[RMDB]
Chemical mapping of a 177-nucleotide RNA with DMS and 2A3. It was measured as part of the RMDB library OK2TST. 2A3 adducts were read by reverse transcription with SuperScript II with manganese. DMS adducts were read by reverse transcription with MarathonRT.
RNA sequence: GGGAACGACUCGAGUAGAGUCGAAAAGGGGGCAUUGUGAUACGCACUUUUAACUGUUUAUCAGCAGAAUGCCAAAUUCAGCCAGCUGAAAAGAGAAGGUGAUACACGUACCCGGUUCAGCAUAUGAACUGAUCGGAUGAUUCGUCAUCCGAUCAGUAAAAGAAACAACAACAACAAC
Reactivity to DMS in 0.01 (KOAc 150mM, MgCl2 10mM, bicine 150mM(pH8.5), 24C), signal-to-noise 3, nucleotides 027 to 126: g010g020g010g000g000c080a030u000u000g050u000g000a100u020a020c210g000c000a040c030u000u010u020u000a030a190c180u000g000u000u000u010a100u000c010a010g000c040a110g000a070a020u000g000c090c130a070a130a110u000u010c060a140g020c120c160a090g020c060u000g000a020a030a020a040g010a120g000a060a050g000g010u010g000a070u010a040c080a040c030g040u000a140c030c010c010g000g010u000u000c020a010g040c130a070u010a100u000g000a060
Reactivity to 2A3 in 0.01 (KOAc 150mM, MgCl2 10mM, bicine 150mM(pH8.5), 24C), signal-to-noise 1, nucleotides 027 to 126: g090g000g040g000g000c030a000u040u070g040u020g000a030u040a070c080g080c000a010c000u170u020u020u050a090a040c020u020g060u040u010u070a200u050c010a000g050c000a000g120a140a010u000g020c020c040a070a140a040u120u030c040a040g050c070c010a020g000c040u010g000a030a060a020a020g110a000g040a070a000g070g010u010g010a060u050a110c060a000c080g050u000a010c010c000c000g020g000u020u080c000a000g000c030a050u070a090u150g090a150
Conditions: 150 mM KOAc, 10 mM MgCl2 and 150 mM bicine (pH 8.5), 24 C.